[RMDB]
RNA sequence: GGGAACGACUCGAGUAGAGUCGAAAACUUCCUCCCUGCUGAGGUUCUUCCCUCCCGAGGAGAGCUGCUUCUUCUUGUUCUCCAGGGCCUUCCUUCUUCGGUGAUCCCGUCUCUCCUGUUCGGUGAACAAUAGUCUAUGCUUCGGCAUAGACUAUUGAAAAGAAACAACAACAACAAC
Reactivity to DMS in 0.01 (KOAc 150mM, MgCl2 10mM, bicine 150mM(pH8.5), 24C), signal-to-noise 4, nucleotides 027 to 126: c260u000u000c020c010u010c020c010c050u000g020c070u000g010a100g010g010u000u000c060u000u000c010c010c010u000c030c020c030g000a120g020g010a030g020a030g010c090u000g010c140u010u010c070u000u000c060u010u000g010u010u000c020u000c020c050a180g010g010g010c080c030u000u000c020c020u000u000c030u000u010c060g020g020u000g000a110u010c030c010c010g010u000c040u010c030u000c020c030u000g000u010u000c060g000g020u000g000a070a160
Reactivity to 2A3 in 0.01 (KOAc 150mM, MgCl2 10mM, bicine 150mM(pH8.5), 24C), signal-to-noise 1, nucleotides 027 to 126: c010u030u040c010c000u010c020c000c010u050g010c070u050g030a010g020g000u050u000c000u020u000c000c000c000u010c020c010c000g020a050g000g020a020g000a010g020c020u040g020c010u050u040c010u030u030c010u060u040g000u000u000c010u000c010c010a000g020g020g000c000c010u030u020c020c000u030u050c000u050u050c010g040g010u040g020a030u010c020c010c000g050u010c010u000c000u000c040c010u010g050u090u030c040g020g010u070g050a030a010
About this RNA: Chemical mapping of a 177-nucleotide RNA with DMS and 2A3. For DMS the reverse transcriptase was MarathonRT. 2A3 is a SHAPE reagent: it acylates the 2'-hydroxyl of flexible nucleotides of all four kinds. For 2A3, 3,329 sequencing reads were counted. Conditions: 150 mM KOAc, 10 mM MgCl2 and 150 mM bicine (pH 8.5), 24 C.